This 207-nucleotide RNA was probed chemically with 2A3.
Conditions: 150 mM KOAc, 10 mM MgCl2 and 150 mM bicine (pH 8.5), 24 C.
Reactivities are given for positions 27 through 156.
[RMDB]
RNA sequence: GGGAACGACUCGAGUAGAGUCGAAAAUGAGACAAACACGCUUCACAAUGUGCGGCAAAGAAACAUUGUUUAUGCAAAGGCACUUCGCAAUGUGUGCUCAAACAUUGCUUAUUCAAACUCGCUUCACAAAAGAAUCAGUGGUUCGCCACUGAUUCAAGCCGUAUAAGACCUUCGGGUCUUAUACGGCAAAAGAAACAACAACAACAAC
Reactivity to 2A3 in 0.01 (KOAc 150mM, MgCl2 10mM, bicine 150mM(pH8.5), 24C), signal-to-noise 2, nucleotides 027 to 156: u110g010a020g070a060c060a030a230a000c140a000c030g000c000u000u000c030a000c000a010a010u030g020u060g000c030g040g010c060a040a000a170g040a000a010a040c030a000u000u000g150u090u010u130a110u170g100c060a080a040a030g230g010c020a010c010u080u090c010g000c000a000a000u010g000u010g060u060g040c090u060c180a050a040a000c000a020u000u030g000c000u050u060a080u120u140c220a100a150a190c010u000c000g060c040u130u120c120a060c020a150a170a030a050g000a000a000u000c000a000g000u000g000g060u030u010c110g040c060c000a000c000u000g000a000u000u000c000a000a000